The data come from the RNA Mapping Database (RMDB), library M2RFPK. An RNA of 207 nucleotides, treated with 2A3 and DMS and read out base by base. Values cover nucleotides 27 to 156. For 2A3 the reverse transcriptase was SuperScript II with manganese. The 2A3 profile rests on 775 reads.
[RMDB]
RNA sequence: GGGAACGACUCGAGUAGAGUCGAAAAAUACAUACUGACACCGGUUGCUCAACAGGCUGUGUGGGACAAUAGAAUAACAAGGCUGUCAAUUUGAGCUUGACGGCUGCAGACCGAAUGGAGUGAAAUCGUAACCGGACUCACUUCGGUGAGUCCGGAACUGUAUUCCUGUGUUCGCACAGGAAUACAGAAAAGAAACAACAACAACAAC
Reactivity to 2A3 in 0.01 (KOAc 150mM, MgCl2 10mM, bicine 150mM(pH8.5), 24C), signal-to-noise 2, nucleotides 027 to 156: a010u180a040c040a040u130a030c040u110g090a010c020a030c070c020g040g020u050u090g020c010u010c030a050a150c010a100g040g010c050u010g040u000g030u090g080g000g030a010c060a010a160u170a130g220a140a110u130a160a010c040a100a000g060g000c040u010g020u020c030a020a030u060u070u260g060a040g070c020u000u040g030a040c000g000g000c040u070g000c010a000g000a040c040c020g040a090a070u060g060g000a010g010u070g050a020a100a110u130c100g000u050a040a100c000c000g010g000a000c000u000c000a000c000u020u090c070g010g010u020g000a000g010u000c000c000g020g000a000a000
Reactivity to DMS in 0.01 (KOAc 150mM, MgCl2 10mM, bicine 150mM(pH8.5), 24C), signal-to-noise 1, nucleotides 027 to 156: a110u000a090c020a060u000a210c130u000g010a120c020a180c030c060g030g040u010u000g010c020u010c070a080a100c060a070g030g010c040u020g030u010g010u010g020g040g020a080c040a080a110u000a100g000a220a050u000a000a110c110a090a170g000g000c000u010g020u010c010a030a020u000u000u000g000a240g010c300u000u000g020a010c050g040g050c000u010g000c080a140g020a050c000c030g010a030a150u000g020g000a060g000u000g020a030a020a140u020c060g050u020a090a100c000c010g050g000a030c000u000c010a000c020u010u000c300g070g010u000g040a030g000u000c010c020g000g000a020a020